[RMDB]
RNA sequence: GGGAACGACUCGAGUAGAGUCGAAAAGACCUUCAGUUCGCUGAAGGUCGAUGAUGGUAAGAGAGAUUACCAUCUGUUAAGUGAUAUGGAUAACAUCUCUCAGUGAACGUGCUUUCGAGCACGUUAAUCAAGUAUACGAGUUCGCUCGUAUACUUGAAAAAGAAACAACAACAACAAC
Reactivity to DMS in 0.01 (KOAc 150mM, MgCl2 10mM, bicine 150mM(pH8.5), 24C), signal-to-noise 7, nucleotides 027 to 126: g000a010c000c010u000u000c000a000g010u000u010c220g020c000u000g000a010a000g000g010u000c010g000a030u000g010a050u000g000g000u000a040a130g000a040g000a020g010a040u000u000a030c000c010a010u000c000u000g010u000u000a070a120g010u000g010a100u010a110u000g010g010a130u020a060a070c200a030u000c000u000c000u000c010a200g010u010g010a030a010c000g010u000g000c000u000u010u020c200g010a010g010c000a000c000g010u000u000a020a140
Reactivity to 2A3 in 0.01 (KOAc 150mM, MgCl2 10mM, bicine 150mM(pH8.5), 24C), signal-to-noise 9, nucleotides 027 to 126: g000a000c000c000u000u000c000a030g010u020u110c170g010c100u000g000a000a000g000g000u010c000g000a000u020g000a000u010g000g040u040a110a020g020a000g000a000g000a020u010u020a000c000c000a000u000c020u040g130u100u170a190a130g090u080g190a100u100a090u300g190g040a070u080a180a040c020a050u020c000u000c010u000c030a020g060u050g250a020a000c000g000u000g000c000u070u080u130c210g030a000g000c000a000c020g000u000u000a000a030
This 177-nucleotide RNA was probed chemically with DMS and 2A3.
It was measured as part of the RMDB library M2PK50.
DMS adducts were read by reverse transcription with MarathonRT.